[RMDB]
RNA sequence: GGGAACGACUCGAGUAGAGUCGAAAACAGUAUGCCUUCGGGCAUACUGAAACCAGAGCGUAUCUGGCCCACGCUCCCAUGCGUGCCGGGAAUCCCAUCCCAAAACGGAUGUCUUCGGACAUCCGAACUUCAUAAUACUCUUCGGAGUAUUAUGAAGAAAAGAAACAACAACAACAAC
Reactivity to DMS in 0.01 (KOAc 150mM, MgCl2 10mM, bicine 150mM(pH8.5), 24C), signal-to-noise 9, nucleotides 027 to 126: c000a010g000u000a000u000g010c000c000u000u010c230g040g020g030c000a000u000a000c000u000g000a010a030a080c010c000a020g000a030g000c300g010u000a080u000c000u000g010g010c300c060c000a070c030g010c010u010c180c070c170a090u010g010c020g010u000g010c190c100g000g000g000a040a060u000c010c000c000a110u000c000c000c010a050a040a060a190c020g010g000a010u000g000u000c000u000u010c170g020g000a000c000a000u000c000c000g000a010a040
Reactivity to 2A3 in 0.01 (KOAc 150mM, MgCl2 10mM, bicine 150mM(pH8.5), 24C), signal-to-noise 9, nucleotides 027 to 126: c000a000g010u000a000u000g000c000c010u060u130c300g110g010g000c000a000u000a000c000u000g000a030a000a000c010c000a000g010a010g020c190g080u260a080u040c010u010g020g000c010c020c000a010c000g000c000u180c020c070c040a050u230g000c010g010u010g050c050c070g000g000g020a010a030u020c000c000c000a020u020c010c010c010a030a070a010a030c010g000g000a000u000g000u000c010u030u080c240g110g000a000c000a000u000c000c000g000a010a010
This 177-nucleotide RNA was probed chemically with DMS and 2A3. For 2A3 the reverse transcriptase was SuperScript II with manganese. For DMS the reverse transcriptase was MarathonRT. The RNA was probed in 150 mM KOAc, 10 mM MgCl2 and 150 mM bicine (pH 8.5) at 24 C. Source: RMDB library M2PK50, as collected in RNAgym.